The record gives the reactivity of an RNA of 207 nucleotides to DMS and 2A3. Source: RMDB library OK3TST, as collected in RNAgym. The RNA was probed in 150 mM KOAc, 10 mM MgCl2 and 150 mM bicine (pH 8.5) at 24 C. Reactivities are given for positions 27 through 156.
RNA sequence: GGGAACGACUCGAGUAGAGUCGAAAAUACUUCGAUGGGAUCUUGCUAAAUAUAAUGGACCAACAACUAAGUUUCUUACAACAGGCCAGAAGCUAGGAUCGCUCUCAAUAUACCAACUAUUGGAUUAUACCAAUUGGUAUUCAUCGAGAUACUAUGCAACGCAGUCAAAUUUCGAUUUGACUGCGUUAAAAGAAACAACAACAACAAC
Reactivity to DMS in 0.01 (KOAc 150mM, MgCl2 10mM, bicine 150mM(pH8.5), 24C), signal-to-noise 3, nucleotides 027 to 156: u000a060c040u000u000c050g010a120u000g010g010g010a030u020c020u000u020g020c030u010a130a060a140u000a160u000a100a150u000g010g020a090c020c000a050a090c080a060a120c070u000a070a170g030u000u000u000c030u000u000a050c020a090a150c100a050g050g040c010c000a100g020a070a110g010c020u020a060g040g000a040u000c020g010c100u000c050u000c050a030a080u010a090u000a050c040c010a010a060c130u000a220u010u000g030g010a160u000u010a210u010a200c040c010a020a170u000u000g010g010u000a000u000u010c080a060u000c010g020a030g000a080u000a030c060u000a060u020g020c050
Reactivity to 2A3 in 0.01 (KOAc 150mM, MgCl2 10mM, bicine 150mM(pH8.5), 24C), signal-to-noise 4, nucleotides 027 to 156: u100a010c050u050u080c010g030a030u060g010g050g030a020u010c010u040u070g010c000u100a060a220a140u200a120u060a160a180u120g000g050a170c040c050a060a110c060a070a030c080u080a140a020g030u050u100u070c090u160u180a110c040a150a010c010a080g030g000c010c000a010g020a120a000g000c090u080a010g030g020a040u040c030g040c080u030c010u000c010a060a010u020a000u000a070c000c020a010a060c050u130a090u050u060g020g000a010u160u100a050u220a210c000c010a010a030u010u010g010g000u010a010u030u030c020a040u030c010g000a000g010a020u060a110c070u080a030u180g070c050